[RMDB]
RNA sequence: GGGAACGACUCGAGUAGAGUCGAAAACGAGAACCAGGCAUCGAGAAAACCUUCGGUACUGUGCUCUGGAUCAGGCUGCGCCAUGCCUUCCACCAGCCCGACGGGAUCAAUCAGAAAGGUGCGGAUGCUCACAUAACGGCUUCGGCCGUUAUGUGAGAAAAGAAACAACAACAACAAC
Reactivity to 2A3 in 0.01 (KOAc 150mM, MgCl2 10mM, bicine 150mM(pH8.5), 24C), signal-to-noise 1, nucleotides 027 to 126: c080g020a000g080a100a090c060c040a000g090g000c000a000u010c080g030a000g100a100a130a060a040c000c020u110u010c030g060g000u060a190c070u040g080u070g040c000u000c040u090g040g020a040u140c110a030g050g000c040u130g030c060g030c090c040a100u150g000c000c010u040u030c000c010a010c000c000a010g000c030c000c020g000a000c010g000g050g010a050u080c040a070a010u040c000a020g200a150a190a040g070g020u020g000c040g020g020a070u140g010
Reactivity to DMS in 0.01 (KOAc 150mM, MgCl2 10mM, bicine 150mM(pH8.5), 24C), signal-to-noise 2, nucleotides 027 to 126: c120g000a080g000a080a130c060c010a040g010g010c060a060u000c030g020a090g010a170a060a090a110c080c020u000u000c040g000g020u010a060c030u010g020u000g020c070u020c050u000g000g000a090u020c150a050g020g000c000u000g000c200g000c070c100a080u000g000c010c000u000u010c050c010a110c030c040a100g000c300c040c050g040a120c130g000g000g000a090u010c050a040a040u000c040a070g000a070a070a130g000g010u000g010c090g000g000a040u000g000